Source information:
Source: RMDB library M2PK90, as collected in RNAgym. The record gives the reactivity of an RNA of 177 nucleotides to DMS. The reactions ran in a buffer of 150 mM KOAc, 10 mM MgCl2 and 150 mM bicine (pH 8.5), at 24 C.

[RMDB]
RNA sequence: GGGAACGACUCGAGUAGAGUCGAAAAUUAUAUAGCGUGUGCAAGACGCUGAACUUGCCAUGAUCUGGAACUUUAGUGCUGAGGUCCGAGUUCCUGAUCAUCAUUUCGGACCUCAGCACUAAUAUAAGUAGUAUUGUUGGUUCGCCAACAAUACUACAAAAGAAACAACAACAACAAC
Reactivity to DMS in 0.01 (KOAc 150mM, MgCl2 10mM, bicine 150mM(pH8.5), 24C), signal-to-noise 3, nucleotides 027 to 126: u010u020a130u010a160u020a060g000c030g020u000g010u010g020c050a020a030g010a090c040g010c170u000g010a080a060c040u000u000g000c000c030a010u000g010a110u020c040u010g020g000a080a130c200u000u000u000a010g000u000g000c000u010g000a020g000g000u000c010c000g000a040g010u000u000c060c050u000g020a090u000c120a060u010c070a070u000u010u000c000g020g010a010c000c000u000c010a010g000c000a000c000u000a000a000u000a050u000a070a150